This 177-nucleotide RNA was probed chemically with DMS. The DMS profile rests on 613 reads. It was measured as part of the RMDB library TTRDEL. The RNA was probed in 150 mM KOAc, 10 mM MgCl2 and 150 mM bicine (pH 8.5) at 24 C. DMS adducts were read by reverse transcription with MarathonRT.
RNA sequence: GGGAACGACUCGAGUAGAGUCGAAAAGAUAUGGAAACCCGCAACAGCGAUUGGUCGGAAACGACCACUGUCGACAUGCCGGUUUCCUAAGUCAAAAGUUAAGGGUUUGUUCGCAAACCCUUAACAACACUCCACCCUACUUCGGUAGGGUGGAGUGAAAAGAAACAACAACAACAAC
Reactivity to DMS in 0.01 (KOAc 150mM, MgCl2 10mM, bicine 150mM(pH8.5), 24C), signal-to-noise 1, nucleotides 027 to 126: g000a010u000a130u000g000g010a000a000a040c000c010c280g000c030a020a180c280a230g000c000g000a030u000u000g010g010u000c010g010g010a060a070a090c000g040a000c020c000a010c300u000g020u000c000g000a060c200a060u000g030c000c300g020g010u010u000u000c000c000u020a010a050g000u000c020a060a120a070a290g010u020u020a000a000g010g000g040u000u000u000g000u030u010c260g030c040a000a010a010c000c000c000u000u000a000a000c010a010a100